Conditions: 150 mM KOAc, 10 mM MgCl2 and 150 mM bicine (pH 8.5), 24 C.
Structure probing data (2A3 and DMS) for a 177-nucleotide construct.
DMS adducts were read by reverse transcription with MarathonRT.
The DMS profile rests on 18,623 reads.
Reactivities are rounded to 0.1 and cut off at 0 and 3.
It was measured as part of the RMDB library OK1LIB.
[RMDB]
RNA sequence: GGGAACGACUCGAGUAGAGUCGAAAAUGGUGGUCUCUGGCAAAUUGGUCCGUAAAUGGGCUCGGUGGGUGCCUGCGUUUGCCACAGGUUGCCUGGGUGGGUCCCAGAGCGGGUGGGUGCCUGGUGGCGAUAUAUUUAAUUUCGAUUAAAUAUAUCGAAAAGAAACAACAACAACAAC
Reactivity to 2A3 in 0.01 (KOAc 150mM, MgCl2 10mM, bicine 150mM(pH8.5), 24C), signal-to-noise 5, nucleotides 027 to 126: u130g020g010u040g010g010u010c030u000c020u040g020g000c020a010a040a080u120u130g050g000u030c010c010g060u070a040a080a080u090g000g010g000c010u020c030g050g010u080g040g040g040u080g010c010c000u020g020c050g020u030u090u130g040c010c000a010c000a010g040g000u070u150g030c010c020u030g030g020g080u200g010g020g020u070c000c000c000a020g020a020g010c040g000g020g100u200g010g010g010u060g010c000c000u040g080g010u030g010g000
Reactivity to DMS in 0.01 (KOAc 150mM, MgCl2 10mM, bicine 150mM(pH8.5), 24C), signal-to-noise 4, nucleotides 027 to 126: u020g000g010u010g000g000u000c010u000c110u000g000g010c050a030a060a080u020u030g010g010u000c020c020g010u010a070a100a030u070g010g010g000c010u010c100g020g020u010g000g000g020u010g010c020c010u010g000c090g020u010u010u020g010c040c030a070c050a030g000g000u010u010g030c020c000u000g020g000g010u040g010g000g010u010c020c010c010a070g000a090g020c090g000g000g010u030g000g010g000u010g000c030c000u010g010g020u010g010g000